[RMDB]
RNA sequence: GGGAACGACUCGAGUAGAGUCGAAAAGAUAUGGAAUCGCCUCCACGAAGUCAUUUGUCAGCGACAGCCUCGGAAACGAGGUGAGUCGCUUGGAUUUAAUGAGCUUCGUGGAGGCGAUUCCUAAGUCCUUAUCCAACAGGUUCGCCUGUUGGAUAAGAAAAGAAACAACAACAACAAC
Reactivity to DMS in 0.01 (KOAc 150mM, MgCl2 10mM, bicine 150mM(pH8.5), 24C), signal-to-noise 1, nucleotides 027 to 126: g010a060u000a300u000g000g000a020a000u000c000g010c000c000u000c000c000a010c000g030a020a010g010u000c000a000u000u010u010g040u000c000a020g010c030g000a000c000a300g000c000c000u010c000g020g000a100a150a230c000g010a000g000g030u000g020a080g000u000c000g000c000u010u010g000g000a000u000u010u000a020a020u010g010a080g000c000u000u010c000g010u000g000g000a000g020g000c010g000a000u000u000c000c000u010a000a090g010u000c040